Conditions: 150 mM KOAc, 10 mM MgCl2 and 150 mM bicine (pH 8.5), 24 C.
Chemical mapping of a 177-nucleotide RNA with 2A3 and DMS.
The DMS profile rests on 810 reads.
2A3 adducts were read by reverse transcription with SuperScript II with manganese.

[RMDB]
RNA sequence: GGGAACGACUCGAGUAGAGUCGAAAAUUUUAUUGAUUGAGUCAUCAACAAGUCCUUUUCCAGUUAAGUGUAUAAUUUGAUAAUCAUGGAGAAGUGCCUCAAUAUUUUGACGAAUGAUAUUAUUAAGGGAAUCAGAUAAGUUCGCUUAUCUGAUUCCAAAAGAAACAACAACAACAAC
Reactivity to 2A3 in 0.01 (KOAc 150mM, MgCl2 10mM, bicine 150mM(pH8.5), 24C), signal-to-noise 1, nucleotides 027 to 126: u040u040u060u010a030u000u020g070a000u030u000g070a000g000u020c010a000u000c010a010a050c040a010a000g000u060c000c000u040u000u040u000c000c000a000g010u060u050a190a030g070u040g140u080a080u070a270a190u170u160u090g040a060u050a070a070u100c050a120u020g000g010a000g000a000a000g010u040g000c000c020u030c000a010a110u040a130u250u100u010u060g000a010c000g020a050a010u020g000a000u020a000u160u050a060u000u000a090a040g160
Reactivity to DMS in 0.01 (KOAc 150mM, MgCl2 10mM, bicine 150mM(pH8.5), 24C), signal-to-noise 1, nucleotides 027 to 126: u020u020u000u000a050u010u000g000a090u000u010g000a300g010u020c000a000u000c040a040a060c150a120a070g000u000c080c010u000u000u000u030c010c020a000g000u000u000a050a040g000u010g030u000a130u000a080a070u010u010u000g010a140u000a110a080u000c200a090u000g000g030a010g000a010a020g030u000g000c040c040u000c100a070a110u020a070u000u000u030u010g030a070c040g000a060a030u000g000a050u010a070u000u000a030u000u000a160a100g010